[RMDB]
RNA sequence: GGGAACGACUCGAGUAGAGUCGAAAACACAACUGCGAAGGGGGGACGGAGAAGGCUAUGUUGGCCGGGCGACGCUUGUCCCGGUUUAAGCGUGUAGGCUGGUUUUCCAGGCAAAUCCGGAAUUGAAUUGUUCCCUUUCAUUCGUGAAAGGGAACAAAAAAGAAACAACAACAACAAC
Reactivity to DMS in 0.01 (KOAc 150mM, MgCl2 10mM, bicine 150mM(pH8.5), 24C), signal-to-noise 1, nucleotides 027 to 126: c080a100c070a080a040c020u000g020c040g010a080a120g010g010g010g000g000g030a100c060g010g000a050g000a110a070g000g020c020u000a050u010g010u010u000g000g020c010c010g000g000g010c100g030a080c150g000c100u040u000g000u010c020c000c030g000g000u000u000u010a050a030g000c060g040u000g000u000a110g000g030c010u010g000g000u000u000u010u000c010c030a080g000g000c070a020a080a080u000c020c020g000g000a050a110u000u030g010a090a120
Structure probing data (DMS) for a 177-nucleotide construct. Reactivities are given for positions 27 through 126. The reactions ran in a buffer of 150 mM KOAc, 10 mM MgCl2 and 150 mM bicine (pH 8.5), at 24 C. Source: RMDB library M2PK90, as collected in RNAgym.